[RMDB]
Source: RMDB library OK3TST, as collected in RNAgym. This 207-nucleotide RNA was probed chemically with 2A3. The 2A3 profile rests on 471 reads. The reactions ran in a buffer of 150 mM KOAc, 10 mM MgCl2 and 150 mM bicine (pH 8.5), at 24 C.

RNA sequence: GGGAACGACUCGAGUAGAGUCGAAAAAAGCUAAUAACAAUCCUCCGCUCGUUAUAAAAUAUGUAAUGGCUUCCUGGCCCUUCGUGUAACGAUCCUGGACGGCCUCGUACUUCUCAUGCAUGGUCUUGUUCACCUGCUCUUCGAUGCACUUGAAGGCGCUAUCCGUAGUCUUCGGACUACGGAUAGCAAAAGAAACAACAACAACAAC
Reactivity to 2A3 in 0.01 (KOAc 150mM, MgCl2 10mM, bicine 150mM(pH8.5), 24C), signal-to-noise 1, nucleotides 027 to 156: a000a000g040c110u160a120a070u130a140a110c030a000a120u010c010c000u030c060c020g000c030u050c000g070u020u050a060u090a150a090a030a000u220a070u110g120u140a070a020u070g000g000c010u060u070c020c070u050g010g010c010c090c020u030u050c020g030u030g000u010a100a030c030g000a030u040c020c030u020g010g000a050c020g030g030c000c010u000c050g020u010a040c010u080u190c010u030c030a120u050g000c010a020u110g000g000u070c000u130u060g010u000u050c020a030c050c000u070g070c070u000c010u110u010c030g010a030u070g090c050a070c120u050u130g010a010a020g000g060c030